[RMDB]
RNA sequence: GGGAACGACUCGAGUAGAGUCGAAAACGAAUCGGAGGGUAAAGCGGUGCAGGUUAAAUCGGAAAUAGUUUGGGUAUGCCUCGCUGCCCAAAUGAAAUUUAGAGGAUAAGGCAUUGGUUGGUGGUUCAGGUCUUGCCAAUGCUCGAAAACCAAAGGCGAGUGCCUUAUACUUCGGUAUAAGGCACUCAAAAGAAACAACAACAACAAC
Reactivity to 2A3 in 0.01 (KOAc 150mM, MgCl2 10mM, bicine 150mM(pH8.5), 24C), signal-to-noise 1, nucleotides 027 to 156: c050g020a020a020u120c070g000g010a020g040g040g000u140a190a120a000g100c050g010g000u040g000c010a010g000g040u050u080a040a070a030u140c060g010g060a050a080a090u130a040g000u030u000u000g000g000g000u030a020u090g020c010c000u040c040g020c010u020g020c010c000c000a000a000a000u020g020a000a030a080u030u100u090a030g000a020g050g000a030u070a050a080g010g040c000a000u020u030g000g020u040u030g050g020u030g010g060u080u110c080a090g000g060u010c000u010u000g010c000c000a000a000u010g010c020u030c030g000a010a020a020a020c040c030a030a050a040g030g000c050